[RMDB]
The record gives the reactivity of an RNA of 207 nucleotides to 2A3. The 2A3 profile rests on 1,984 reads. Conditions: 150 mM KOAc, 10 mM MgCl2 and 150 mM bicine (pH 8.5), 24 C.

RNA sequence: GGGAACGACUCGAGUAGAGUCGAAAACAAGAAUAACUGCAUCUUCUUAAUCAAGGAAAUCACGGUCGCGUGUGUGCCGGAAAGAAAGUGGCCUGUGAUCUCCGGUUUCUCUUUCUCGACCGUGUUUCCUUGGUUAACGAUAUGUGCUCGCUAACAAGAGAGUACGAUACUUCGGUAUCGUACUCUCAAAAGAAACAACAACAACAAC
Reactivity to 2A3 in 0.01 (KOAc 150mM, MgCl2 10mM, bicine 150mM(pH8.5), 24C), signal-to-noise 3, nucleotides 027 to 156: c030a020a020g130a180a110u200a090a070c070u110g000c010a020u020c060u090u000c000u000u010a000a000u000c000a000a010g020g010a000a020a020u250c020a010c010g000g000u000c000g000c010g020u050g000u000g010u010g020c000c010g010g000a090a100a030g070a010a090a020g080u120g050g080c050c100u100g040u070g070a050u020c010u000c030c000g000g000u030u280u020c020u010c000u020u260u020c020u020c010g010a000c000c030g000u000g000u000u000u000c000c000u000u000g000g000u000u000a000a000c050g010a000u010a040u160g040u040g020c010u050c060g110c110u230a090a040c100a200a020